This 177-nucleotide RNA was probed chemically with 2A3 and DMS. Reactivities are given for positions 27 through 126. It was measured as part of the RMDB library OK2TST.

[RMDB]
RNA sequence: GGGAACGACUCGAGUAGAGUCGAAAAAUUACUUAUGGCAUUGAACGCAUUGCUAUGUACCUACAAAAGAAAAACUCCAUUUUCGAUGUUCUCUGGAGUGAUGAGCUCACCUAUGGAGACGUGACUCGCAGUUACUAGUAUUCGUACUAGUAACUGCAAAAGAAACAACAACAACAAC
Reactivity to 2A3 in 0.01 (KOAc 150mM, MgCl2 10mM, bicine 150mM(pH8.5), 24C), signal-to-noise 7, nucleotides 027 to 126: a000u150u080a060c050u130u110a060u140g010g000c010a020u020u060g060a300a060c070g010c180a030u000u060g010c000u020a020u120g040u070a100c030c010u050a090c070a040a120a030a040g150a040a080a010a030a020c000u020c030c000a050u040u020u030u040c040g130a200u100g040u070u020c010u000c010u030g040g010a040g020u050g020a080u130g020a010g020c020u020c020a040c000c020u130a160u250g120g020a060g010a040c030g030u010g010a030c010u030c070
Reactivity to DMS in 0.01 (KOAc 150mM, MgCl2 10mM, bicine 150mM(pH8.5), 24C), signal-to-noise 5, nucleotides 027 to 126: a110u010u000a050c090u010u010a090u000g030g020c010a030u000u010g020a150a150c300g020c070a030u000u000g020c030u000a050u010g010u000a060c190c070u000a090c190a080a060a070a070g010a040a020a040a090a080c020u000c010c010a040u000u000u000u000c030g000a110u000g010u000u010c010u000c020u000g000g010a030g000u000g000a080u000g000a110g000c110u000c020a060c050c090u000a160u010g000g000a090g010a080c140g010u000g010a090c040u000c080
Description
The RNA was probed in 150 mM KOAc, 10 mM MgCl2 and 150 mM bicine (pH 8.5) at 24 C. The DMS profile rests on 5,054 reads. For 2A3 the reverse transcriptase was SuperScript II with manganese.